[RMDB]
RNA sequence: GGGAACGACUCGAGUAGAGUCGAAAAAAAGUUGAGUAUUUAACCAUCAUACUGAACAAGAAGGUCAAAUUCAUUUCGACAACGUCAAUAUUCCGUAGCUCUGUGACAAACGUUCUCUGAAAAGGCGUCAACUUCGAAUUGAGAUCACGGAAAUGAAUCAUGAAUAGUCGUUCGCGACUAUUCAUGAAAAAGAAACAACAACAACAAC
Reactivity to 2A3 in 0.01 (KOAc 150mM, MgCl2 10mM, bicine 150mM(pH8.5), 24C), signal-to-noise 4, nucleotides 027 to 156: a000a000a010g040u040u040g020a020g010u090a070u080u150u080a140a040c050c020a030u080c010a030u080a080c040u080g030a040a010c030a040a030g120a080a050g110g030u150c110a060a080a030u090u070c030a030u040u020u050c040g040a050c070a090a040c060g060u020c030a040a000u060a090u170u010c080c020g020u020a000g000c000u000c010u080g090u110g070a100c090a040a080a010c030g030u170u080c030u000c030u120g120a090a100a020a010g020g010c000g040u020c030a100a190c050u050u030c020g020a040a040u060u050g010a020g000a020u120c060a020c070g030g050a000a000a020u070g020a030a020
Reactivity to DMS in 0.01 (KOAc 150mM, MgCl2 10mM, bicine 150mM(pH8.5), 24C), signal-to-noise 2, nucleotides 027 to 156: a050a080a080g020u000u000g000a120g050u000a090u000u000u000a040a150c050c070a100u010c100a080u010a300c030u000g000a050a190c080a160a110g020a160a060g010g010u000c040a050a040a070u000u030c000a190u000u010u000c060g010a070c050a040a080c040g020u010c020a060a120u010a130u010u000c020c000g000u000a100g020c020u000c030u000g020u010g010a060c090a040a080a060c040g010u000u000c000u000c040u010g000a130a100a080a070g010g010c050g010u000c030a050a060c060u000u000c050g010a160a060u000u000g010a230g030a060u000c070a070c040g010g010a030a030a080u000g000a100a180